[RMDB]
RNA sequence: GGGAACGACUCGAGUAGAGUCGAAAAUGUAAUUAUUAAUCAUGAACGAGGAAUUCCUAGUAAACGCAAGUCAUCAUCUUGCAUUGAUUACGUCCCUGCCCUUUGUACACACCGCCCGUCGCACCUAACCUCAUAGAGGGUUCGCCCUCUAUGAGGUAAAAGAAACAACAACAACAAC
Reactivity to DMS in 0.01 (KOAc 150mM, MgCl2 10mM, bicine 150mM(pH8.5), 24C), signal-to-noise 1, nucleotides 027 to 126: u000g000u000a040a020u000u010a130u000u000a070a130u030c080a030u010g020a080a150c060g010a050g000g020a140a160u020u000c010c010u000a060g060u000a040a040a110c160g000c050a030a050g040u010c170a040u000c140a060u000c050u000u010g000c000a050u000u000g000a070u010u010a030c080g020u020c000c000c000u000g000c060c010c080u010u000u010g020u000a070c030a070c030a070c070c060g020c000c020c030g030u000c020g030c070a050c050c020u010a080
Reactivity to 2A3 in 0.01 (KOAc 150mM, MgCl2 10mM, bicine 150mM(pH8.5), 24C), signal-to-noise 1, nucleotides 027 to 126: u110g000u070a060a080u060u110a040u100u120a130a030u070c060a100u110g080a060a020c070g000a020g050g010a000a090u040u140c010c000u000a010g070u090a000a020a100c100g000c020a000a000g030u060c040a170u000c020a030u030c080u020u020g000c040a050u030u070g090a050u070u010a020c030g000u000c020c010c010u030g010c020c000c000u050u020u150g040u100a030c070a010c010a020c050c020g000c020c000c030g030u040c000g010c000a000c010c000u020a100